[RMDB]
Record summary: The record gives the reactivity of an RNA of 177 nucleotides to 2A3 and DMS. For DMS, 1,839 sequencing reads were counted. The 2A3 profile rests on 1,346 reads. DMS adducts were read by reverse transcription with MarathonRT. 2A3 adducts were read by reverse transcription with SuperScript II with manganese. Values cover nucleotides 27 to 126.

RNA sequence: GGGAACGACUCGAGUAGAGUCGAAAAGCAAUCCGGUGAAAUUGAUGUUCUGUCUCGUAACACAACAUGGACUCUGCAACGUGAUAGCGCCCUGGGUCUUAACUUUGUCGGGGUGAACUACUACGAACAUCCUAGCACUGUUCGCAGUGCUAGGAUGAAAAGAAACAACAACAACAAC
Reactivity to 2A3 in 0.01 (KOAc 150mM, MgCl2 10mM, bicine 150mM(pH8.5), 24C), signal-to-noise 2, nucleotides 027 to 126: g050c000a010a110u000c000c040g100g020u070g110a110a150a030u170u170g050a120u070g120u050u030c020u000g020u020c010u040c120g030u080a060a020c070a000c000a070a020c010a030u040g000g070a010c000u020c020u050g030c010a020a070c050g030u040g030a100u040a030g030c000g010c060c000c010u030g030g000g040u000c040u080u150a130a120c050u140u200u150g040u080c040g000g000g000g000u030g000a020a000c010u120a050c020u030a050c100g040a050a000
Reactivity to DMS in 0.01 (KOAc 150mM, MgCl2 10mM, bicine 150mM(pH8.5), 24C), signal-to-noise 3, nucleotides 027 to 126: g010c080a130a070u010c010c030g020g000u020g020a080a120a140u020u010g010a100u000g000u000u000c080u020g000u000c050u000c120g030u010a120a090c160a180c050a020a020c080a050u000g000g020a030c030u000c030u000g010c050a080a040c100g000u020g000a130u020a030g000c090g000c030c010c010u000g020g020g000u010c060u000u000a070a050c130u000u000u000g030u010c050g010g000g020g000u000g010a040a090c080u000a050c070u000a070c060g020a060a180